Chemical mapping of a 177-nucleotide RNA with 2A3 and DMS. As a SHAPE reagent, 2A3 marks flexible, mostly unpaired nucleotides at the ribose 2'-OH. Conditions: 150 mM KOAc, 10 mM MgCl2 and 150 mM bicine (pH 8.5), 24 C. Source: RMDB library RFMREP, as collected in RNAgym. For DMS the reverse transcriptase was MarathonRT.

RNA sequence: GGGAACGACUCGAGUAGAGUCGAAAAUCUGUCGACGCUUCGGCGUCGACAGAAAAUCUGGGGUAUGGCGUAAGUACAGAGAAGCCAUCACCUCAGAAAAACGAGUUAAUGGUUCGCCAUUAACUCGCUACGCUUACUAGUUCGCUAGUAAGCGUAGAAAAGAAACAACAACAACAAC
Reactivity to 2A3 in 0.01 (KOAc 150mM, MgCl2 10mM, bicine 150mM(pH8.5), 24C), signal-to-noise 2, nucleotides 027 to 126: u000c010u010g030u000c010g010a020c020g000c020u090u100c270g070g000c020g020u000c000g020a000c000a010g010a000a000a000a000u010c000u000g000g020g000g010u030a000u000g000g030c020g000u050a060a110g070u080a190c110a060g190a030g030a300a000g020c010c010a010u010c050a020c000c000u020c020a000g010a050a030a000a000a000c000g000a000g000u000u020a000a020u000g080g000u030u060c200g040c070c010a000u010u000a000a000c000u000c000g000
Reactivity to DMS in 0.01 (KOAc 150mM, MgCl2 10mM, bicine 150mM(pH8.5), 24C), signal-to-noise 3, nucleotides 027 to 126: u000c010u010g030u000c010g000a040c040g020c000u000u020c280g000g000c010g070u000c000g010a000c010a000g000a020a050a110a050u000c000u020g000g010g000g020u000a010u000g000g000c000g010u010a130a140g010u000a110c300a160g000a110g000a140a200g000c000c010a010u000c140a010c010c000u000c000a000g000a020a090a040a100a220c020g000a030g020u000u000a000a000u000g000g010u000u010c240g010c000c000a010u000u000a000a010c000u000c000g000
For 2A3, 2,492 sequencing reads were counted.